[RMDB]
RNA sequence: GGGAACGACUCGAGUAGAGUCGAAAAGGAUUGAACUAGAUACAAAACACCACCAUUGUGCAAUCCUCCCUUUCACAGGCAGCCUAUGUACUUUUGAUAGGGAUGGCAGUCUUAGAGUUUGGAGGUGCGUCUUGUCUGGUUUCGACCAGACAAGACGAAAAGAAACAACAACAACAAC
Reactivity to 2A3 in 0.01 (KOAc 150mM, MgCl2 10mM, bicine 150mM(pH8.5), 24C), signal-to-noise 1, nucleotides 027 to 126: g000g000a010u000u000g050a030a000c070u070a150g050a180u140a110c040a000a060a040a010c050a040c010c010a020c010c020a040u020u080g000u050g000c000a030a030u010c000c030u100c010c000c000u060u190u100c110a120c020a010g000g000c020a000g000c030c000u040a080u070g160u170a110c010u120u190u200u170g130a270u190a080g000g030g010a040u040g020g000c000a000g000u000c030u000u040a060g000a040g060u040u100u100g050g000a040g000g000u030g030
Reactivity to DMS in 0.01 (KOAc 150mM, MgCl2 10mM, bicine 150mM(pH8.5), 24C), signal-to-noise 1, nucleotides 027 to 126: g000g000a040u000u000g000a090a090c100u010a140g000a180u000a070c120a030a030a090a210c070a010c000c000a050c060c010a160u000u000g020u000g000c010a020a000u000c010c000u000c000c000c020u000u000u000c160a120c280a000g000g020c000a020g010c030c050u000a090u000g030u000a090c030u000u020u000u000g050a060u000a020g020g000g000a090u020g010g050c040a030g060u000c040u040u000a140g000a070g010u010u010u000g040g000a060g020g010u000g010

An RNA of 177 nucleotides, treated with 2A3 and DMS and read out base by base. 2A3 adducts were read by reverse transcription with SuperScript II with manganese. The reactions ran in a buffer of 150 mM KOAc, 10 mM MgCl2 and 150 mM bicine (pH 8.5), at 24 C.